[RMDB]
RNA sequence: GGGAACGACUCGAGUAGAGUCGAAAAAACACCCUCUGCGCAGGGAGGUGGGUGUGGGUGCCCCCAGGCAGAAGCUGGGACCCAGUAGGGAGUCUGAAGGGUGCUGCAGUGGCUGAAUGUCCCUCUCUUCUGAUGCCUCCACAUUGUCUCAGUGGUACAAGUAGUAUCGAUUCGUCGAUACUACUUGAAAAGAAACAACAACAACAAC
Reactivity to DMS in 0.01 (KOAc 150mM, MgCl2 10mM, bicine 150mM(pH8.5), 24C), signal-to-noise 2, nucleotides 027 to 156: a040a060c010a030c020c010c010u000c020u000g020c080g000c070a220g000g030g000a110g020g010u000g000g000g020u010g010u000g000g030g010u010g000c030c040c020c000c010a240g040g020c080a160g000a100a210g030c060u000g000g000g020a090c000c050c070a210g000u010a110g060g030g010a100g020u000c080u000g000a110a050g020g020g010u010g000c120u030g010c000a090g010u010g000g070c030u070g000a110a090u000g020u000c030c050c070u010c050u010c020u000u000c040u010g010a110u000g000c020c030u010c010c030a090c230a140u000u010g040u000c030u000c030a140g040u000g010g000u000a060
Reactivity to 2A3 in 0.01 (KOAc 150mM, MgCl2 10mM, bicine 150mM(pH8.5), 24C), signal-to-noise 3, nucleotides 027 to 156: a000a000c040a030c000c030c010u000c030u050g050c130g020c050a050g010g030g040a060g020g040u080g040g040g010u110g040u100g020g060g000u040g010c040c020c000c000c010a020g020g010c040a020g050a120a010g030c010u010g010g000g010a030c020c020c030a000g030u110a060g010g010g050a050g020u020c030u020g020a050a000g050g030g000u030g060c050u050g000c020a050g030u050g100g000c020u080g130a200a100u150g080u130c000c000c010u010c000u000c000u080u000c020u030g020a050u050g040c010c010u020c010c000a050c020a100u150u130g020u020c020u020c030a050g020u030g050g000u050a040